Record summary
Source: RMDB library OK2TST, as collected in RNAgym. This 177-nucleotide RNA was probed chemically with DMS. The reactions ran in a buffer of 150 mM KOAc, 10 mM MgCl2 and 150 mM bicine (pH 8.5), at 24 C.
[RMDB]
RNA sequence: GGGAACGACUCGAGUAGAGUCGAAAAAUAACACCCAUGUCGCCGGUGCGGAACCAAUCACCGUGGAAGGUGGCUGCGGUUGCUUCUGGUUUGUUGAGGUAGCCUUGGAAAAUCUGUGGUCCGCGGGCCUAUACGGCGAUUUCGAUCGCCGUAUAGGAAAAGAAACAACAACAACAAC
Reactivity to DMS in 0.01 (KOAc 150mM, MgCl2 10mM, bicine 150mM(pH8.5), 24C), signal-to-noise 1, nucleotides 027 to 126: a100u020a120a130c080a120c000c010c000a090u020g030u010c070g040c000c020g000g050u020g050c010g020g010a100a100c020c010a090a110u000c040a020c020c030g050u000g010g010a120a160g040g020u000g000g010c030u000g000c290g020g000u000u000g000c040u020u010c020u010g020g000u000u000u020g010u000u010g010a030g010g000u000a030g000c030c000u000u020g030g010a110a100a140a090u010c090u050g010u010g010g020u000c000c010g000c030g000g010g030
Source information
The DMS profile rests on 993 reads.